[RMDB]
RNA sequence: GGGAACGACUCGAGUAGAGUCGAAAACGAUAGGUUCGCCUAUCGAAAGGGGUCUUCGAAGCGUUCGAAGAACGUGGAACUACUCCUGAAGCCUCCACGGGAGCCACGGGAGAACGCGGAGAAGACGGAGGCACCCAAAGUGAUCUUUCGAGAUCACACGUAUUGAUAUCUUCGGAUAUCAAUACGUAAAAGAAACAACAACAACAAC
Reactivity to DMS in 0.01 (KOAc 150mM, MgCl2 10mM, bicine 150mM(pH8.5), 24C), signal-to-noise 4, nucleotides 027 to 156: c020g020a010u000a010g020g050u020u010c300g040c000c010u000a010u010c000g020a020a070a130g010g010g040g030u000c020u010u000c010g020a300a300g030c030g010u010u000c010g010a080a160g000a070a110c030g020u000g010g010a210a100c120u000a300c000u000c000c010u000g010a050a080g000c040c000u000c010c010a300c070g000g000g000a060g000c010c020a060c070g010g000g010a100g000a020a050c020g020c000g010g000a300g000a030a050g000a050c070g000g020a050g030g010c010a080c000c020c000a050a090a120g040u000g000a010u000c000u000u010u000c300g000a090g000a030u000c000a010c000
Reactivity to 2A3 in 0.01 (KOAc 150mM, MgCl2 10mM, bicine 150mM(pH8.5), 24C), signal-to-noise 6, nucleotides 027 to 156: c020g000a010u000a010g010g060u050u050c290g050c060c000u000a000u000c000g020a090a010a000g010g000g000g000u010c010u000u000c010g010a040a010g000c000g000u010u010c040g110a240a030g010a020a020c000g000u010g010g030a150a100c100u230a060c010u300c000c000u010g010a020a010g010c000c000u000c000c000a020c000g010g000g000a010g000c000c010a000c000g000g010g000a080g000a000a000c000g000c000g000g000a010g000a000a000g000a000c010g000g000a000g000g000c010a040c010c010c010a040a050a020g000u000g000a000u000c010u050u210u190c300g090a030g000a040u000c000a000c000
Conditions: 150 mM KOAc, 10 mM MgCl2 and 150 mM bicine (pH 8.5), 24 C.
An RNA of 207 nucleotides, treated with DMS and 2A3 and read out base by base.
It was measured as part of the RMDB library RNAMAK.